[RMDB]
RNA sequence: GGGAACGACUCGAGUAGAGUCGAAAAUAGGCUUACGGCCGUCUUGCUUCCAAACAUUCACACGCUUUUUGACAUGUCGGCGGAGGAUUUUGAUGCAAUCAUAGCAGAACACUUCAAGCAAGGCGACCCGGAAUAUAGUCUUCGGACUAUAUUCCGGAAAAGAAACAACAACAACAAC
Reactivity to 2A3 in 0.01 (KOAc 150mM, MgCl2 10mM, bicine 150mM(pH8.5), 24C), signal-to-noise 1, nucleotides 027 to 126: u080a010g050g000c030u080u090a030c100g080g020c010c000g000u000c000u010u010g020c000u150u010c070c010a070a040a000c030a080u040u070c020a030c030a030c100g070c020u210u240u170u190u250g100a060c040a130u100g050u170c040g030g000c010g000g000a010g020g020a020u160u050u070u060g010a030u060g000c000a070a030u050c090a080u220a120g000c040a020g020a080a050c030a010c070u100u160c060a000a020g020c010a000a030g000g020c010g040a060c000
Reactivity to DMS in 0.01 (KOAc 150mM, MgCl2 10mM, bicine 150mM(pH8.5), 24C), signal-to-noise 2, nucleotides 027 to 126: u010a060g020g010c090u010u020a150c100g000g000c010c020g050u010c010u000u010g000c020u000u020c090c050a050a070a090c170a030u000u000c050a090c180a300c080g000c030u000u020u010u020u010g000a120c170a120u010g010u010c070g030g000c000g000g010a090g000g010a020u010u000u020u000g000a160u000g000c030a050a110u010c150a070u030a210g020c060a040g000a090a110c190a090c090u010u050c000a010a040g010c000a020a040g000g000c020g010a080c060
Structure probing data (2A3 and DMS) for a 177-nucleotide construct. It was measured as part of the RMDB library OK2TRN. Values cover nucleotides 27 to 126. The RNA was probed in 150 mM KOAc, 10 mM MgCl2 and 150 mM bicine (pH 8.5) at 24 C.